RNA sequence: GGGAACGACUCGAGUAGAGUCGAAAAAGGGGGUAGGUAUCAUAUCUUUUCUACUUAUCGGAUGAUGAUAUGGACGAGCAGACGCAAAUACAGCUGCGUUACAAGCUAUCCUCUACAACCGUAUUGGCACAACCCAAGAAUUCGUUCUUGGGUUGUGAAAAGAAACAACAACAACAAC
Reactivity to 2A3 in 0.01 (KOAc 150mM, MgCl2 10mM, bicine 150mM(pH8.5), 24C), signal-to-noise 1, nucleotides 027 to 126: a000g000g020g000g000g020u000a010g120g000u080a070u220c000a000u020a010u000c000u060u070u000u050c000u030a140c030u150u230a180u280c080g040g000a020u070g030a000u050g000a000u010a010u040g050g000a000c000g020a030g060c030a010g030a020c020g040c010a080a110a010u230a140c050a050g070c050u030g000c010g020u000u010a020c000a050a010g000c020u010a010u000c000c000u040c010u030a010c040a030a000c000c030g080u170a210u220u300g100g080
Reactivity to DMS in 0.01 (KOAc 150mM, MgCl2 10mM, bicine 150mM(pH8.5), 24C), signal-to-noise 3, nucleotides 027 to 126: a020g000g000g000g000g030u000a000g000g010u010a070u000c000a000u000a000u000c000u020u000u010u000c030u000a120c180u000u030a100u020c160g000g000a040u010g000a040u010g000a010u000a010u000g000g000a060c070g000a090g020c160a120g000a030c030g010c030a050a070a120u000a150c300a140g010c160u000g000c000g020u000u000a110c150a130a120g010c010u010a030u000c000c000u000c010u000a020c110a060a120c020c010g030u020a140u000u000g030g020
Source: RMDB library OK2TRN, as collected in RNAgym. Chemical mapping of a 177-nucleotide RNA with 2A3 and DMS. For 2A3 the reverse transcriptase was SuperScript II with manganese. For DMS the reverse transcriptase was MarathonRT. Values cover nucleotides 27 to 126.